[RMDB]
RNA sequence: GGGAACGACUCGAGUAGAGUCGAAAAGGUUACUCUCAUGGGCUCUGUCCAAGUGGCGUAUGGGAGCGUAGUGCUUUAUGGCGCAGUGACGUACAAUCCCUUUCCACAACAUUGAAGAACAAGCAUGUCUCGGUGUACGUUUCGACGUACACCGAGAAAAAGAAACAACAACAACAAC
Reactivity to 2A3 in 0.01 (KOAc 150mM, MgCl2 10mM, bicine 150mM(pH8.5), 24C), signal-to-noise 2, nucleotides 027 to 126: g030g000u090u080a110c000u030c000u000c000a000u040g110g020g000c000u020c000u080g080u040c020c000a000a010g130u050g010g000c080g210u090a070u040g000g000g030a000g030c020g000u020a060g020u020g070c000u080u160u040a050u270g000g000c010g000c070a050g040u020g140a030c090g030u030a040c080a030a090u040c010c000c000u000u010u000c020c020a060c040a130a050c020a120u000u140g070a100a020g030a070a050c020a030a030g020c000a030u140g030
Reactivity to DMS in 0.01 (KOAc 150mM, MgCl2 10mM, bicine 150mM(pH8.5), 24C), signal-to-noise 1, nucleotides 027 to 126: g000g010u000u000a120c000u000c000u000c000a030u000g060g000g000c000u000c120u010g000u020c120c100a180a000g060u000g000g000c130g010u000a030u000g000g000g020a060g030c090g000u000a010g010u050g010c010u000u010u010a060u030g000g020c030g010c010a090g040u050g000a150c140g000u010a070c060a070a230u000c000c010c000u000u000u000c010c040a060c040a030a090c180a160u000u030g000a040a070g000a070a020c100a040a050g010c070a000u020g010

An RNA of 177 nucleotides, treated with 2A3 and DMS and read out base by base.
It was measured as part of the RMDB libraries RFM100 and RFMREP.
For DMS the reverse transcriptase was MarathonRT.